RNA sequence: GGGAACGACUCGAGUAGAGUCGAAAAGAAUGUAGCCAAACCGUGUGAAAAACGAUGGCUAUUUAGGAAUCGUUCUGAGGCAACAGGUAAAAUGGAAGAAAGCCAAAUCCUUAGCAUAUGGAAGAAAAUAAAUUUACGAUUUCGAUCGUAAAUUUAUAAAAGAAACAACAACAACAAC
Reactivity to 2A3 in 0.01 (KOAc 150mM, MgCl2 10mM, bicine 150mM(pH8.5), 24C), signal-to-noise 7, nucleotides 027 to 126: g090a020a080u210g000u030a000g000c000c000a040a060a080c100c020g030u070g010u060g120a130a020a010a000a000c020g010a030u030g000g000c000u010a010u040u080u080a080g020g080a050a070u070c070g040u040u000c040u030g070a030g090g000c020a030a020c010a090g000g030u060a100a110a050a030u110g070g020a080a070g080a170a130a020g060c010c010a030a030a050u080c010c000u030u030a010g010c040a070u090a080u130g070g040a070a030g050a060a120a010
Reactivity to DMS in 0.01 (KOAc 150mM, MgCl2 10mM, bicine 150mM(pH8.5), 24C), signal-to-noise 8, nucleotides 027 to 126: g000a110a080u030g000u000a000g010c010c010a020a090a100c210c030g000u000g010u020g040a110a090a100a120a000c000g000a080u000g000g000c000u000a010u010u000u020a110g000g010a050a050u010c030g010u010u000c010u010g010a110g000g000c050a070a110c270a050g010g010u000a040a050a070a090u020g000g000a070a080g020a100a070a120g020c000c010a020a080a100u020c010c020u010u000a200g010c040a070u010a050u020g010g010a080a070g000a060a050a050